Structure probing data (2A3 and DMS) for a 207-nucleotide construct. Conditions: 150 mM KOAc, 10 mM MgCl2 and 150 mM bicine (pH 8.5), 24 C. The 2A3 profile rests on 1,791 reads. It was measured as part of the RMDB library RNAMAK. For DMS, 2,058 sequencing reads were counted. Values cover nucleotides 27 to 156.
[RMDB]
RNA sequence: GGGAACGACUCGAGUAGAGUCGAAAACCGUAGGAUCGCUUUUUUUACAGCGAAGAACAUGGGUCACAGCCACCUUCGAAAGAGGGUGGUCACAGCCCAUGGGAGCUGUAGGCGAUCCUAAACGGAAAAUGAACACUCUAUUCGUAGAGUGUUCAAAGAAUACCCAUGCGUUCGCGCAUGGGUAUUCAAAAGAAACAACAACAACAAC
Reactivity to 2A3 in 0.01 (KOAc 150mM, MgCl2 10mM, bicine 150mM(pH8.5), 24C), signal-to-noise 2, nucleotides 027 to 156: c000c000g000u010a020g000g010a010u000c000g020c040u140u140u110u170u090u100u090a010c000a010g000c010g130a300a030g010a010a000c000a000u000g000g000g030u160c030a000c020a040g000c000c000a010c000c010u000u000c010g030a090a050a030g000a010g000g000g000u000g000g000u010c000a000c000a000g000c010c000c000a000u010g000g000g000a030g000c000u000g000u030a020g010g010c000g000a000u030c000c000u010a000a000a000c030g070g080a080a030a000a240u110g000a000a000c000a000c000u000c000u010a030u080u090c260g090u070a000g000a000g000u000g000u000u000c000a000a000a000
Reactivity to DMS in 0.01 (KOAc 150mM, MgCl2 10mM, bicine 150mM(pH8.5), 24C), signal-to-noise 1, nucleotides 027 to 156: c020c010g040u000a060g000g000a000u000c010g000c040u140u010u000u050u000u000u000a060c040a040g000c000g000a060a290g040a060a140c010a000u000g000g000g000u000c030a140c160a270g000c010c000a000c020c000u000u000c000g020a050a120a300g000a020g000g020g040u000g000g010u000c040a050c160a220g000c000c000c000a020u000g000g000g000a090g060c000u000g010u020a020g020g010c000g010a000u000c000c000u000a020a000a070c020g050g000a090a090a110a190u000g040a050a060c010a000c000u000c000u000a110u020u010c300g060u000a000g010a080g030u000g000u010u000c000a070a030a130